[RMDB]
RNA sequence: GGGAACGACUCGAGUAGAGUCGAAAACCUAUGACGAUUUGAUGGCCUAAUUUAGUAGGAUACGCUUUUGUGGUGUCUUGACAUGAAAGAAGAGAUUAAGAGACUCGCCAGCUGACUUUGUUCGAGGAUUGUCUUGUCAGUUGGGUAAAUUUAGACAGACAUCGAUCAUGUUCGCAUGAUCGAUGUCAAAAGAAACAACAACAACAAC
Reactivity to 2A3 in 0.01 (KOAc 150mM, MgCl2 10mM, bicine 150mM(pH8.5), 24C), signal-to-noise 1, nucleotides 027 to 156: c040c000u040a140u190g090a030c090g070a120u070u070u210g140a090u200g000g000c020c000u070a090a200u110u200u140a190g070u040a060g020g010a030u000a080c090g010c090u000u060u080u030g070u010g030g000u040g000u020c010u020u020g000a000c000a070u100g010a000a120a060g000a000a000g070a000g060a000u160u160a040a040g020a000g000a040c060u000c080g150c030c000a000g000c000u000g000a000c000u170u030u030g130u110u190c140g020a010g000g110a120u100u160g010u000c040u000u030g000u000c060a000g030u000u000g000g000g010u000a000a000a000u080u060u030a010g090a020c030a030
Conditions: 150 mM KOAc, 10 mM MgCl2 and 150 mM bicine (pH 8.5), 24 C. The record gives the reactivity of an RNA of 207 nucleotides to 2A3. The 2A3 profile rests on 348 reads. It was measured as part of the RMDB library RSTRND. 2A3 is a SHAPE reagent: it acylates the 2'-hydroxyl of flexible nucleotides of all four kinds. Reactivities are rounded to 0.1 and cut off at 0 and 3.